RNA sequence: GGGAACGACUCGAGUAGAGUCGAAAAGGCGAUUGAGAGGCCCUCUCAUUAAUGCGGAGGUGUCACGCUGACAGAAUGAUAUUAGAUGUCCGCUUCCGGUUGCAUCGCGGCGAUGAUUACAUAGGACAUCGAUUACCCAUUAGCUUCGGGGAAGCAACACUGAUAAUCGAUUCGUCGAUUAUCAGUGAAAAGAAACAACAACAACAAC
Reactivity to DMS in 0.01 (KOAc 150mM, MgCl2 10mM, bicine 150mM(pH8.5), 24C), signal-to-noise 3, nucleotides 027 to 156: g000g010c020g010a210u000u010g000a140g040a120g020g000c010c000c010u010c010u000c030a220u000u000a130a120u000g020c150g000g000a050g020g040u010g020u010c020a030c040g020c070u000g030a230c090a080g040a130a060u000g010a180u020a120u000u000a110g010a080u000g020u000c000c030g010c070u000u000c030c020g030g030u000u000g060c030a140u000c080g030c070g040g020c090g000a070u000g000a120u000u000a060c080a120u000a050g000g010a060c000a020u000c010g000a130u010u000a080c020c020c000a070u010u000a150g000c030u000u000c080g000g000g020g000a090a060g050c030a110a250
Reactivity to 2A3 in 0.01 (KOAc 150mM, MgCl2 10mM, bicine 150mM(pH8.5), 24C), signal-to-noise 5, nucleotides 027 to 156: g030g000c020g030a070u110u190g090a120g020a100g080g020c010c010c000u000c000u000c010a150u160u300a180a070u170g060c100g020g000a000g000g030u150g000u080c030a020c040g000c010u010g030a020c040a030g170a110a100u150g070a050u050a090u180u150a060g030a020u020g000u000c000c040g010c030u080u030c030c010g060g000u040u050g030c060a050u040c090g000c050g110g020c090g020a020u060g030a060u060u240a050c060a070u160a110g010g010a000c000a000u000c000g000a010u000u040a030c000c000c020a030u110u130a010g030c020u070u060c040g070g000g000g000a010a010g010c010a010a040